RNA sequence: GGGAACGACUCGAGUAGAGUCGAAAAGUUCGAACACGUUCGUGUGAUCACACGUUCGAACGAACGAGAUCUCGAGAGAGAGAUCGAUCUCGUGAACUCGUUCGAGUUCGUACUCUCUCUCUCGUACACUCGUGUACGUACGUGAGAUCACGUACGAGUACGCGUCGCAUUUCGAUGCGACGCGUACAAAAGAAACAACAACAACAAC
Reactivity to 2A3 in 0.01 (KOAc 150mM, MgCl2 10mM, bicine 150mM(pH8.5), 24C), signal-to-noise 3, nucleotides 027 to 156: g000u010u060c000g030a010a020c070a000c140g050u070u110c050g010u030g040u110g190a190u150c020a010c020a010c090g010u020u060c010g000a050a010c010g020a040a000c020g000a000g010a080u070c020u030c090g000a010g000a000g000a000g000a000g000a010u180c000g000a020u000c000u010c010g010u090g120a130a140c130u150c210g140u070u080c000g000a000g000u000u000c000g010u160a160c000u000c000u000c000u000c010u040c010u000c030g000u070a030c070a000c040u010c000g050u060g060u060a080c000g000u010a000c000g000u020g020a170g030a100u240c010a000c000g020u040a000c000g000a000
An RNA of 207 nucleotides, treated with 2A3 and read out base by base. The RNA was probed in 150 mM KOAc, 10 mM MgCl2 and 150 mM bicine (pH 8.5) at 24 C. As a SHAPE reagent, 2A3 marks flexible, mostly unpaired nucleotides at the ribose 2'-OH.